[RMDB]
RNA sequence: GGGAACGACUCGAGUAGAGUCGAAAAGAGCAACUUAGGAUUUUAGGCUCCCCGGUGCGUCUCGAAUCGCGCCGGGCCAAACCCACAGGGGCUGGCGGUCCUGUGCGGUCAAAAUCUUUCCGCUGGAAUACCUAUCCCAGUUUCGACUGGGAUAGAACGAUAUAAUGCCGUUCGCGGCAUUAUAUCGAAAAGAAACAACAACAACAAC
Reactivity to 2A3 in 0.01 (KOAc 150mM, MgCl2 10mM, bicine 150mM(pH8.5), 24C), signal-to-noise 2, nucleotides 027 to 156: g010a000g010c010a000a100c090u070u060a060g080g100a080u030u020u040u040a070g000g010c000u000c000c000c000c000g000g000u000g000c020g050u020c100u120c250g230a200a100u070c020g000c000g000c000c010g000g000g030c000c010a030a020a000c000c000c000a000c000a000g010g000g000g010c010u010g000g000c000g000g030u020c010c010u000g000u000g010c190g030g020u040c020a000a000a070a070u040c030u110u160u030c020c000g000c040u020g000g040a110a080u150a140c000c000u000a000u000c010c000c000a010g000u010u040u170c160g090a030c000u000g000g010g000a000u010a000g000a010a000